[RMDB]
RNA sequence: GGGAACGACUCGAGUAGAGUCGAAAAUGGGCAUGUGAUGUGACCUUCCUGAGCCUGCAUUCCCUCACCUGGAAAUGAUGAGCAGUUACUGAUGCCACAAAAACCAAGCGCUGUUCGCAGCGCUUGGGCAUAGUCUGUUGUUCGCAACAGACUAUGCAAAAGAAACAACAACAACAAC
Reactivity to 2A3 in 0.01 (KOAc 150mM, MgCl2 10mM, bicine 150mM(pH8.5), 24C), signal-to-noise 4, nucleotides 027 to 126: u100g030g000g010c030a020u030g060u130g100a110u100g050u060g070a150c010c000u030u040c020c010u020g030a030g030c020c020u030g010c020a040u050u060c010c000c020u030c030a090c010c020u030g030g070a070a080a080u100g070a060u050g030a030g000c040a010g020u030u020a050c050u090g060a070u070g020c010c010a080c050a030a120a040a020a020c010c010a010a010g020c010g000c010u010g030u070u070c190g010c090a000g010c000g000c000u000u010g000g000
Reactivity to DMS in 0.01 (KOAc 150mM, MgCl2 10mM, bicine 150mM(pH8.5), 24C), signal-to-noise 3, nucleotides 027 to 126: u010g000g000g010c010a010u000g010u010g020a100u010g010u000g000a050c060c040u000u010c040c010u000g020a130g020c030c030u000g010c050a090u000u000c020c020c010u020c070a070c080c060u010g000g020a050a080a080u000g010a070u010g000a090g000c050a050g020u000u000a080c060u010g010a070u010g010c030c030a100c200a050a030a060a100a240c010c000a000a010g010c000g030c000u000g010u000u010c180g010c000a020g000c000g010c010u000u000g000g010
Source information:
Structure probing data (2A3 and DMS) for a 177-nucleotide construct. The RNA was probed in 150 mM KOAc, 10 mM MgCl2 and 150 mM bicine (pH 8.5) at 24 C. The data come from the RNA Mapping Database (RMDB), library RFMREP. 2A3 adducts were read by reverse transcription with SuperScript II with manganese.